[RMDB]
RNA sequence: GGGAACGACUCGAGUAGAGUCGAAAAUCAUACCCGCCAGCUGGCUAAUAUCAUAAUUAACGAAGUUGGUGCGACGUCUGCAAAGUUUAAUCGGAACAUUUACCAGCGAUGUGAUGGCAUCGUUACGUUGGAACAGUCAUUUCGAUGACUGUUCCAAAAAAGAAACAACAACAACAAC
Reactivity to DMS in 0.01 (KOAc 150mM, MgCl2 10mM, bicine 150mM(pH8.5), 24C), signal-to-noise 2, nucleotides 027 to 126: u010c100a190u040a200c010c010c020g010c040c010a040g000c020u020g000g000c090u000a020a030u010a050u010c220a060u050a090a080u000u000a060a070c040g000a080a080g010u030u000g000g040u000g000c060g000a090c060g020u010c050u000g000c050a030a040a070g010u010u020u000a050a040u030c050g010g000a070a090c140a030u010u000u000a100c110c020a080g000c010g000a070u010g020u000g010a120u070g000g000c000a010u000c000g000u020u000a030c160g030
Reactivity to 2A3 in 0.01 (KOAc 150mM, MgCl2 10mM, bicine 150mM(pH8.5), 24C), signal-to-noise 2, nucleotides 027 to 126: u020c000a000u130a040c000c010c010g000c000c000a000g000c040u070g010g000c020u180a060a020u090a040u060c120a070u020a180a110u150u030a000a070c050g050a150a000g040u000u030g000g000u010g000c000g030a000c010g030u020c140u050g080c000a000a020a190g000u100u270u120a160a160u060c040g020g000a100a030c120a080u060u000u090a130c110c060a000g000c000g000a000u000g050u000g070a100u300g130g000c000a000u000c000g000u000u080a120c060g050